Conditions: 150 mM KOAc, 10 mM MgCl2 and 150 mM bicine (pH 8.5), 24 C.
The record gives the reactivity of an RNA of 177 nucleotides to DMS and 2A3.
RNA sequence: GGGAACGACUCGAGUAGAGUCGAAAAGUGGCAUACUUCGGUAUGCCACAAACCAGACCCUAUCUGGAACACGCUCUACUGCGUGAUCCCAACUAGAUCCCAAAAGUCGUGGGUUCGCCCACGACAACAUUAUAAGGCACUUCGGUGCCUUAUAAUGAAAAGAAACAACAACAACAAC
Reactivity to DMS in 0.01 (KOAc 150mM, MgCl2 10mM, bicine 150mM(pH8.5), 24C), signal-to-noise 5, nucleotides 027 to 126: g010u000g000g000c000a010u000a000c000u000u010c190g030g010u000a000u000g000c000c010a000c000a010a040a120c050c040a070g010a070c140c080c090u000a180u000c020u000g000g000a110a160c040a040c040g000c010u000c270u000a080c140u010g010c030g020u000g010a100u000c010c000c050a060a080c150u000a080g010a130u000c020c000c010a080a080a090a110g000u000c000g030u000g000g000g030u000u010c220g030c000c000c000a000c000g000a000c000a060a080
Reactivity to 2A3 in 0.01 (KOAc 150mM, MgCl2 10mM, bicine 150mM(pH8.5), 24C), signal-to-noise 5, nucleotides 027 to 126: g010u000g000g000c010a000u010a000c020u030u040c200g060g000u000a010u000g020c000c010a000c010a000a000a000c000c000a000g040a020c060c020c040u090a100u070c010u020g000g030a040a030c020a010c020g030c010u060c070u210a140c140u100g050c010g010u010g030a050u020c000c000c000a020a030c040u110a040g050a260u090c040c020c020a020a110a060a080g000u000c000g000u000g010g010g000u020u020c190g070c010c000c000a000c000g000a000c000a000a000